[RMDB]
RNA sequence: GGGAACGACUCGAGUAGAGUCGAAAAUAUGAACUUUAAAGUAGUUUUUUCCAAUUCUGUGAAGAAAGUCAUUGGUAGCUUGAUGGGGAUGGCAUUGAAUCUAUAAAUUACCUUGGGCAGUAUGGCCAUUUUCAUGAUACUGAUUCUUCCUGCCCAACGUGAGUAAUGAGUUCGCUCAUUACUCACGAAAAGAAACAACAACAACAAC
Reactivity to DMS in 0.01 (KOAc 150mM, MgCl2 10mM, bicine 150mM(pH8.5), 24C), signal-to-noise 1, nucleotides 027 to 156: u000a110u010g010a030a010c010u000u000u000a070a080a170g050u000a070g020u000u000u000u000u020u010c010c010a030a170u000u010c090u000g000u000g000a110a020g020a060a030a120g000u000c090a090u000u000g020g010u000a030g020c100u000u010g020a090u000g000g000g040g000a040u000g010g010c030a150u000u010g010a070a180u010c020u000a160u000a020a060a110u000u010a020c080c080u000u000g010g020g050c000a030g050u000a060u000g040g000c030c030a080u000u000u010u000c050a010u010g010a190u010a130c050u000g000a150u000u000c040u000u000c070c030u000g010c000c000c000a020a110
Reactivity to 2A3 in 0.01 (KOAc 150mM, MgCl2 10mM, bicine 150mM(pH8.5), 24C), signal-to-noise 2, nucleotides 027 to 156: u240a040u080g000a020a020c010u100u110u110a180a140a050g040u070a090g060u100u000u000u030u030u010c030c010a030a070u090u080c070u080g060u080g030a040a030g050a080a090a070g050u060c030a030u060u080g050g000u040a050g050c060u080u150g040a030u050g060g000g010g000a010u010g030g000c010a020u030u080g040a050a020u030c030u050a070u140a160a100a060u130u080a100c020c000u010u000g000g010g000c000a000g010u060a030u140g050g000c010c000a030u070u060u000u010c030a030u080g110a040u050a100c020u030g020a030u030u020c000u020u040c020c000u020g000c000c020c000a000a010